[RMDB]
RNA sequence: GGGAACGACUCGAGUAGAGUCGAAAAAAGAAACAUUGUUUAUGCAAAGGCACUUCGCAAUGUGUGCUCAAACAUUGCGUAUUCAAACACGCUUCACAAUGUGCGACAAAGAAACAUUGUUAUAAGAUCCACUAAGUCGCCUUCGGGCGACUUAGAAGAAUUCCAGAUAGUUCGCUAUCUGGAAUUCAAAAGAAACAACAACAACAAC
Reactivity to 2A3 in 0.01 (KOAc 150mM, MgCl2 10mM, bicine 150mM(pH8.5), 24C), signal-to-noise 4, nucleotides 027 to 156: a000a020g140a030a080a010c040a050u060u050g030u090u150u120a090u100g020c050a030a090a140g100g000c020a020c010u040u040c050g030c060a030a050u030g020u020g030u040g040c040u060c130a080a080a010c020a010u010u010g000c010g000u030a070u040u140c040a020a080a030c050a010c060g010c010u010u020c020a010c000a040a010u020g000u010g010c000g020a060c110a080a140a010g050a040a050a000c010a010u020u000g000u020u070a090u010a090a060g030a050u040c060c010a020c030u010a000a010g000u000c000g000c000c010u040u110c160g020g000g000c010g020a000c000u000u000a000g000a000a000
Reactivity to DMS in 0.01 (KOAc 150mM, MgCl2 10mM, bicine 150mM(pH8.5), 24C), signal-to-noise 2, nucleotides 027 to 156: a140a120g000a130a060a020c010a050u000u000g020u000u000u000a050u020g050c010a060a120a110g020g000c030a050c020u010u010c030g000c040a050a020u000g000u000g030u000g030c060u010c130a180a130a070c000a030u000u010g030c020g000u000a030u010u010c090a100a100a150c100a060c070g010c070u000u010c160a110c070a070a020u000g040u000g000c080g020a100c070a030a100a110g010a100a060a010c030a040u000u000g010u000u000a060u000a080a060g000a110u010c050c030a190c010u000a000a050g000u020c020g030c010c010u010u020c300g030g020g010c030g010a020c010u000u010a000g010a020a180

Background
The record gives the reactivity of an RNA of 207 nucleotides to 2A3 and DMS. The data come from the RNA Mapping Database (RMDB), library M2RFPK. For 2A3 the reverse transcriptase was SuperScript II with manganese. Values cover nucleotides 27 to 156.